[RMDB]
RNA sequence: GGGAACGACUCGAGUAGAGUCGAAAAAUGGAUUGGGAACGAAGUUGGCGUUUGAUUAUCUGGUGGUUGCCUCAGGAUCUUCAUACGCAUUUCCAUGUCGACCACCCCCAGAAGCGGAAGGAAAGGAUCACGUAUCGAUCUUCGGAUCGAUACGUGAAAAAGAAACAACAACAACAAC
Reactivity to DMS in 0.01 (KOAc 150mM, MgCl2 10mM, bicine 150mM(pH8.5), 24C), signal-to-noise 1, nucleotides 027 to 126: a080u000g010g000a050u000u000g040g010g020a100a060c080g000a070a060g010u010u010g030g050c070g040u010u000u010g000a070u000u000a000u030c030u000g010g040u000g010g010u000u000g000c070c040u000c130a130g000g010a010u010c060u000u000c010a100u010a120c130g050c050a070u000u000u010c000c030a050u000g010u000c040g010a080c000c020a120c000c010c020c010c020a080g000a020a100g000c080g030g000a040a040g010g000a000a030a040g020g000a150
The record gives the reactivity of an RNA of 177 nucleotides to DMS. Values cover nucleotides 27 to 126. Conditions: 150 mM KOAc, 10 mM MgCl2 and 150 mM bicine (pH 8.5), 24 C. It was measured as part of the RMDB library OK2TST. For DMS, 1,130 sequencing reads were counted.